[RMDB]
RNA sequence: GGGAACGACUCGAGUAGAGUCGAAAAGGAGCUCGGGAUGCUCUAAAUCCUAGGAAGAGCAUCCGUACGGUCUUCCUUACCACCAGACCGUAUUGAAGUGUUGGUGGUUUUGAGACACUUCAGUGAGGGCUCAAAAGGACAUUGCUCUUACCGAGCAGAGUGCACUAAUAUUCGUAUUAGUGCACUCAAAAGAAACAACAACAACAAC
Reactivity to 2A3 in 0.01 (KOAc 150mM, MgCl2 10mM, bicine 150mM(pH8.5), 24C), signal-to-noise 5, nucleotides 027 to 156: g110g000a010g000c010u010c020g040g010g000a000u010g000c000u000c000u000a110a070a060u090c040c050u090a120g070g070a080a020g000a000g000c000a000u000c000c000g000u000a000c010g020g000u010c020u080u110c020c030u020u110a070c020c030a010c010c010a000g010a000c000c000g010u020a050u030u090g020a030a020g010u020g030u050u040g030g110u070g120g000u070u060u110u190g060a030g000a000c010a000c010u020u010c010a010g020u050g120a120g010g000g000c000u010c020a080a100a000a020g050g010a040c050a130u070u130g000c000u000c000u050u050a120c040c070g000a000g000c010a000
Reactivity to DMS in 0.01 (KOAc 150mM, MgCl2 10mM, bicine 150mM(pH8.5), 24C), signal-to-noise 3, nucleotides 027 to 156: g020g000a070g080c020u000c010g020g010g000a040u000g000c000u010c010u000a040a080a120u000c050c030u010a140g020g010a140a060g000a020g000c010a020u000c010c020g010u000a010c010g010g010u010c020u000u010c010c030u000u000a210c160c080a080c020c040a080g000a040c000c000g010u000a050u000u000g020a060a060g020u000g010u000u000g010g020u000g030g010u010u020u000u000g000a270g000a050c010a040c010u000u000c020a060g010u000g020a080g020g000g020c000u000c020a050a060a080a120g010g020a120c160a120u000u000g000c010u000c040u000u010a140c110c060g000a100g030c060a150

Structure probing data (2A3 and DMS) for a 207-nucleotide construct. The reactions ran in a buffer of 150 mM KOAc, 10 mM MgCl2 and 150 mM bicine (pH 8.5), at 24 C. Reactivities are given for positions 27 through 156. The data come from the RNA Mapping Database (RMDB), library OK3TST. The 2A3 profile rests on 6,072 reads.